[RMDB]
RNA sequence: GGGAACGACUCGAGUAGAGUCGAAAAGAGUCUGGCCGUGAGACCUAGUCUCUCUGUCUCACCUGGCGGGGUGAUGUGUCCACUUCAAAGUCUCACUGGACACAGGCAGGCAAACCCUCACCGGGCACAGAUCCUACCUGUUCGCAGGUAGGAUCUGAAAAGAAACAACAACAACAAC
Reactivity to DMS in 0.01 (KOAc 150mM, MgCl2 10mM, bicine 150mM(pH8.5), 24C), signal-to-noise 2, nucleotides 027 to 126: g010a030g010u010c010u010g010g000c110c070g040u000g000a110g020a010c000c060u050a040g030u000c050u010c030u000c050u000g010u000c040u000c060a110c010c070u010g050g000c100g010g000g010g030u010g000a140u000g020u000g010u000c020c040a020c130u000u000c100a120a110a110g010u000c040u010c020a040c080u010g030g000a040c030a020c000a070g010g000c000a070g010g000c110a090a100a020c130c030c000u010c050a030c070c000g000g030g030c280a110
Reactivity to 2A3 in 0.01 (KOAc 150mM, MgCl2 10mM, bicine 150mM(pH8.5), 24C), signal-to-noise 1, nucleotides 027 to 126: g020a000g040u000c010u000g010g000c000c040g030u000g000a000g020a010c020c060u040a010g060u020c010u000c000u000c030u080g080u040c010u030c090a070c000c010u010g000g070c040g020g050g010g000u080g030a140u100g020u010g020u040c010c000a010c000u270u170c150a150a110a060g040u030c020u040c060a010c050u030g040g000a020c020a000c000a040g090g000c010a000g140g000c120a090a040a130c040c010c010u030c030a060c020c000g000g000g000c110a030